[RMDB]
RNA sequence: GGGAACGACUCGAGUAGAGUCGAAAAGAUAUGGACAUCCGGGAGGGAGAACCGUUCGGAAACGAACGAAGUUCUUUGAUCUCCGAUGUCCUAAGUCAAAAGCAGUAGAACUUCGGUUCUACUGCAACAAUUUUUAGUCGUUCGCGACUAAAAAUUGAAAAGAAACAACAACAACAAC
Reactivity to DMS in 0.01 (KOAc 150mM, MgCl2 10mM, bicine 150mM(pH8.5), 24C), signal-to-noise 2, nucleotides 027 to 126: g000a050u000a190u010g000g000a040c000a010u000c020c300g010g030g000a010g000g020g010a020g020a000a020c020c010g020u000u000c000g040g000a060a060a120c000g000a010a000c000g010a110a200g000u000u000c000u000u000u010g000a180u000c000u000c010c160g010a000u000g010u000c000c000u000a010a080g010u000c020a170a060a120a150g000c000a000g000u000a000g010a010a010c010u000u020c230g020g020u000u000c000u000a000c000u000g010c010a000a040
Reactivity to 2A3 in 0.01 (KOAc 150mM, MgCl2 10mM, bicine 150mM(pH8.5), 24C), signal-to-noise 1, nucleotides 027 to 126: g000a010u010a040u110g020g000a000c010a010u000c070c250g140g060g020a010g030g160g040a010g010a010a010c010c000g000u000u020c000g000g010a060a040a030c020g010a000a000c020g070a170a090g020u020u000c000u240u070u230g270a270u000c000u000c000c020g010a000u000g000u000c010c000u000a060a000g050u000c020a000a280a080a000g000c000a010g000u000a010g000a000a000c020u100u130c300g050g000u000u000c000u000a000c010u020g000c000a000a000
Structure probing data (DMS and 2A3) for a 177-nucleotide construct.
Conditions: 150 mM KOAc, 10 mM MgCl2 and 150 mM bicine (pH 8.5), 24 C.
High 2A3 reactivity points to a flexible backbone, as in loops and unpaired stretches.